[RMDB]
RNA sequence: GGGAACGACUCGAGUAGAGUCGAAAAUUGGAAUUCGUUCCAAGCGAAGGCGUACUACUGGACAUGCCUUAUACUGGUUUCGACCUGAUCCCAAAUAGGAUCAGGUGCCAGACGUAAGGCAACAGCCAGUAUCGCGAUUCAAGGAUUUCGAUCCUAAUUAGCUAUUGUUUUUCGAAACAAUAGCUAAAAAAGAAACAACAACAACAAC
Reactivity to 2A3 in 0.01 (KOAc 150mM, MgCl2 10mM, bicine 150mM(pH8.5), 24C), signal-to-noise 6, nucleotides 027 to 156: u040u040g030g020a020a040u090u060c120g060u110u040c050c020a060a020g100c090g060a060a030g120g020c010g020u040a050c030u000a000c000u020g000g020a060c040a150u020g000c010c000u000u010a010u000a010c000u000g000g110u060u080u300c170g120a050c000c000u000g000a000u030c020c010c030a170a300a090u300a110g000g000a000u000c000a000g000g000u010g000c000c000a020g090a210c110g010u010a000a000g000g000c000a020a000c030a010g000c000c010a000g000u000a010u040c010g000c020g010a020u030u050c050a080a050g000g030a030u090u120u120c140g040a010u030c010c000u080a120a200
Reactivity to DMS in 0.01 (KOAc 150mM, MgCl2 10mM, bicine 150mM(pH8.5), 24C), signal-to-noise 3, nucleotides 027 to 156: u000u000g000g020a030a070u000u010c120g030u000u000c040c050a080a090g020c160g000a080a060g020g030c010g010u000a100c080u000a020c010u000g000g010a080c090a300u010g000c000c000u000u000a040u000a060c010u000g010g010u010u000u000c170g020a110c010c010u010g010a020u000c000c010c020a050a180a260u010a050g000g010a010u000c010a010g000g020u000g010c000c010a000g020a090c090g030u000a020a040g010g020c000a060a090c070a120g000c000c010a030g010u000a010u000c010g030c010g000a130u010u000c030a050a090g000g000a080u000u000u010c110g010a070u000c010c000u010a060a210

The record gives the reactivity of an RNA of 207 nucleotides to 2A3 and DMS. The 2A3 profile rests on 5,686 reads. For DMS, 10,832 sequencing reads were counted.